[RMDB]
RNA sequence: GGGAACGACUCGAGUAGAGUCGAAAAUGACGCUCUCAUUGACCGUUGGGCAACCAACCGGCGCGCCAAAAACGGCGGCGUGAGCUUCACCAACCAAAGCGUUGAGGCUAAGACCAUGGGGCAGCCCGACGCACUUCCAUUUCGAUGGAAGUGCGUCAAAAGAAACAACAACAACAAC
Reactivity to DMS in 0.01 (KOAc 150mM, MgCl2 10mM, bicine 150mM(pH8.5), 24C), signal-to-noise 2, nucleotides 027 to 126: u030g000a060c090g000c000u000c010u050c040a110u000u000g010a120c020c080g020u000u000g010g000g000c140a240a200c030c020a040a060c050c060g040g010c020g010c040g040c000c040a010a080a090a070a090c200g010g010c090g000g000c020g070u020g000a020g040c040u000u010c030a050c060c000a080a150c090c110a090a070a200g010c090g000u000u000g000a030g010g010c010u000a140a100g000a160c070c060a060u000g040g000g000g000c070a080g020c010c010c030
Reactivity to 2A3 in 0.01 (KOAc 150mM, MgCl2 10mM, bicine 150mM(pH8.5), 24C), signal-to-noise 2, nucleotides 027 to 126: u050g060a000c070g010c020u020c000u020c010a060u060u090g060a130c020c000g000u010u020g060g000g020c030a030a060c000c010a020a060c060c050g010g010c020g000c010g000c020c030a140a150a080a050a100c140g110g010c020g030g000c020g000u010g020a020g020c000u000u000c060a030c000c020a060a100c060c100a160a100a070g060c090g100u100u070g020a010g030g040c000u030a050a030g090a090c040c040a070u070g000g000g030g050c040a010g030c000c010c030

Background:
This 177-nucleotide RNA was probed chemically with DMS and 2A3. DMS adducts were read by reverse transcription with MarathonRT. The 2A3 profile rests on 1,932 reads.